[RMDB]
This 177-nucleotide RNA was probed chemically with 2A3 and DMS. Conditions: 150 mM KOAc, 10 mM MgCl2 and 150 mM bicine (pH 8.5), 24 C.
RNA sequence: GGGAACGACUCGAGUAGAGUCGAAAACCGCACUUCUUCGGAAGUGCGGAAAUACCGAGAUUGUACCUCGGUAGAAGUACAUAACCCUUGGAAACAACGGAAAAAGCGUGAGCUUCGGCUCACGCAAGACACUUUACUUGUUCGCAAGUAAAGUGUCAAAAGAAACAACAACAACAAC
Reactivity to 2A3 in 0.01 (KOAc 150mM, MgCl2 10mM, bicine 150mM(pH8.5), 24C), signal-to-noise 3, nucleotides 027 to 126: c000c000g000c010a000c010u010u030c010u020u030c080g110g010a010a010g000u000g000c000g000g000a010a010a010u010a010c000c000g000a010g000a040u140u210g050u170a110c010c010u010c000g010g000u010a020g010a060a010g060u100a030c030a090u110a100a120c000c020c000u030u070g050g030a050a100a020c030a060a060c100g050g070a160a050a020a070a000g010c000g000u000g010a010g000c010u040u110c200g070g000c000u000c000a010c010g000c000a010a000
Reactivity to DMS in 0.01 (KOAc 150mM, MgCl2 10mM, bicine 150mM(pH8.5), 24C), signal-to-noise 4, nucleotides 027 to 126: c010c000g000c000a010c010u000u000c000u010u020c240g020g000a010a000g000u000g010c000g010g000a000a030a070u010a030c000c010g000a030g000a070u000u010g000u010a260c120c010u000c010g000g020u000a020g010a090a100g010u010a070c190a070u000a110a140c040c010c010u010u010g010g000a140a070a110c060a030a050c130g020g010a080a090a060a100a120g010c010g040u010g000a010g020c000u000u010c190g030g000c010u010c000a000c000g010c000a010a010

For 2A3 the reverse transcriptase was SuperScript II with manganese.